[RMDB]
RNA sequence: GGGAACGACUCGAGUAGAGUCGAAAAGUCUCAAACUCCUGGGCUCAGGCGAUCCACCUGUCUCAGCCUCCCAGAGUGCUGGGAUUACAAUUGUGAGCCACCACGUCCAGCUGGAAGGGUCAACAUCAUUCGCUCUUUGGUUCGCCAAAGAGCGAAUAAAAGAAACAACAACAACAAC
Reactivity to DMS in 0.01 (KOAc 150mM, MgCl2 10mM, bicine 150mM(pH8.5), 24C), signal-to-noise 1, nucleotides 027 to 126: g080u000c000u000c110a120a120a080c150u000c240c000u000g000g000g000c140u000c100a190g000g000c100g000a050u050c190c020a050c150c070u040g010u000c010u000c090a110g000c040c030u000c000c070c090a000g000a040g030u000g010c080u000g000g000g000a030u050u040a040c160a070a070u010u000g000u000g000a100g000c120c000a040c100c050a120c050g090u000c010c020a070g000c200u020g010g000a070a250g000g000g000u000c050a080a030c050a000u010c140
Reactivity to 2A3 in 0.01 (KOAc 150mM, MgCl2 10mM, bicine 150mM(pH8.5), 24C), signal-to-noise 3, nucleotides 027 to 126: g020u010c010u000c000a060a070a130c010u010c010c020u020g000g010g000c010u010c060a010g010g040c050g010a020u020c020c020a000c030c060u080g000u000c000u000c020a010g020c000c000u020c140c190c000a100g010a010g010u180g000c000u000g020g000g060a060u090u120a150c130a120a070u120u190g010u080g040a040g050c010c000a030c030c000a050c050g000u050c020c060a010g010c070u070g060g020a100a030g060g000g120u060c040a020a050c000a100u200c000
Chemical mapping of a 177-nucleotide RNA with DMS and 2A3.
Conditions: 150 mM KOAc, 10 mM MgCl2 and 150 mM bicine (pH 8.5), 24 C.
Values cover nucleotides 27 to 126.
For DMS the reverse transcriptase was MarathonRT.
The 2A3 profile rests on 1,417 reads.
It was measured as part of the RMDB library OK1LIB.
In probing experiments dimethyl sulfate is read out at A N1 and C N3, which are open when not base-paired.